An RNA of 177 nucleotides, treated with 2A3 and DMS and read out base by base. DMS adducts were read by reverse transcription with MarathonRT. The 2A3 profile rests on 3,125 reads. The data come from the RNA Mapping Database (RMDB), library M2PK50. The RNA was probed in 150 mM KOAc, 10 mM MgCl2 and 150 mM bicine (pH 8.5) at 24 C.
[RMDB]
RNA sequence: GGGAACGACUCGAGUAGAGUCGAAAACUCUUCUGCUUCGGCAGAAGAGAAAAUAACGCUGGCGUGGGACACAGCCGGAGGUAGCCUCAGAUAGUCUCAGUAAAAUCGGAUAGUUCGCUAUCCGAAACUGAUGAGAUAUCUUCGGAUAUCUCAUCAGAAAAGAAACAACAACAACAAC
Reactivity to 2A3 in 0.01 (KOAc 150mM, MgCl2 10mM, bicine 150mM(pH8.5), 24C), signal-to-noise 2, nucleotides 027 to 126: c000u000c000u010u000c000u000g020c010u020u060c260g150g000c010a010g000a010a000g000a000g000a020a000a000a000u040a020a020c070g020c070u040g050g000c040g050u100g000g030g020a010c020a020c030a080g020c010c030g050g010a010g010g060u130a020g060c020c000u030c010a000g010a090u120a060g010u010c010u000c050a040g090u200a000a140a070a180u020c000g000g000a000u010a010g040u070u050c200g010c100u000a010u000c000c010g000a010a000a000
Reactivity to DMS in 0.01 (KOAc 150mM, MgCl2 10mM, bicine 150mM(pH8.5), 24C), signal-to-noise 2, nucleotides 027 to 126: c010u000c010u010u000c000u000g010c000u000u020c250g020g020c000a000g000a000a000g010a030g000a000a020a030a070u020a100a110c130g020c030u000g000g030c020g020u010g000g000g010a050c040a100c060a070g020c010c070g020g020a050g010g000u010a060g000c020c000u000c140a080g010a080u000a100g000u000c020u010c010a110g030u010a040a040a110a110u000c020g010g000a020u000a010g000u000u010c200g000c000u000a000u000c000c010g010a000a040a050